[RMDB]
RNA sequence: GGGAACGACUCGAGUAGAGUCGAAAAGAUAUGGACGGAUCAUAGGGAGAUGACCAUCGGAAACGAUGGUACAUCAUCGAUCUAUAUCCGUCCUAAGUCAAACGAGAAGGUGUUCGCACCUUCUCGAGACAAUCAUUGUGUUCGCACAAUGAUUGUCAAAAGAAACAACAACAACAAC
Reactivity to DMS in 0.01 (KOAc 150mM, MgCl2 10mM, bicine 150mM(pH8.5), 24C), signal-to-noise 5, nucleotides 027 to 126: g010a010u000a190u020g000g000a010c000g010g000a020u000c300a020u010a010g000g010g010a300g010a010u000g010a080c010c000a000u000c000g010g000a060a050a140c000g000a010u000g000g000u010a030c090a070u000c000a120u000c230g000a230u010c010u000a010u000a020u000c010c000g020u000c000c000u000a000a050g000u000c020a120a100a270c010g000a010g020a030a010g010g020u000g020u010u010c260g020c020a010c010c000u000u000c000u000c000g000a080
Reactivity to 2A3 in 0.01 (KOAc 150mM, MgCl2 10mM, bicine 150mM(pH8.5), 24C), signal-to-noise 5, nucleotides 027 to 126: g000a020u040a020u060g000g000a010c010g000g010a020u050c100a030u290a010g060g090g040a300g020a050u010g020a000c010c000a000u000c000g000g000a030a020a000c010g000a000u010g000g010u030a040c000a010u020c000a010u180c090g050a020u010c000u000a000u000a000u020c010c000g000u020c000c000u010a000a000g000u000c030a020a020a020c010g000a000g000a000a000g040g010u040g050u140u270c300g040c140a010c000c000u000u000c000u000c000g000a010
This 177-nucleotide RNA was probed chemically with DMS and 2A3. DMS adducts were read by reverse transcription with MarathonRT. The DMS profile rests on 7,432 reads. The 2A3 profile rests on 23,674 reads. It was measured as part of the RMDB library TTRDES. Conditions: 150 mM KOAc, 10 mM MgCl2 and 150 mM bicine (pH 8.5), 24 C. Reactivities are rounded to 0.1 and cut off at 0 and 3.